Chemical mapping of a 177-nucleotide RNA with DMS. The reactions ran in a buffer of 150 mM KOAc, 10 mM MgCl2 and 150 mM bicine (pH 8.5), at 24 C.
[RMDB]
RNA sequence: GGGAACGACUCGAGUAGAGUCGAAAAGAUAUGGAGACAUGACAUGAAAGACAUUCGGAAACGAAUGCUUUCAACAGCAUGCUCCUAAGUCAAAACAGAAAUAUUCUCUUCGGAGAAUAUUUCUGAACAUACCAAGCCACUUCGGUGGCUUGGUAUGAAAAGAAACAACAACAACAAC
Reactivity to DMS in 0.01 (KOAc 150mM, MgCl2 10mM, bicine 150mM(pH8.5), 24C), signal-to-noise 1, nucleotides 027 to 126: g010a030u010a300u000g010g020a000g000a160c000a000u000g010a060c030a190u000g020a020a000a000g000a170c000a000u000u000c000g000g000a100a050a140c000g000a030a000u000g000c000u000u000u010c000a020a060c240a110g000c010a000u000g000c000u000c000c000u000a060a070g030u020c030a090a060a090a240c000a060g000a000a000a010u000a000u000u000c000u000c010u000u000c200g020g000a040g010a020a010u000a000u000u000u000c000u000g000a090a130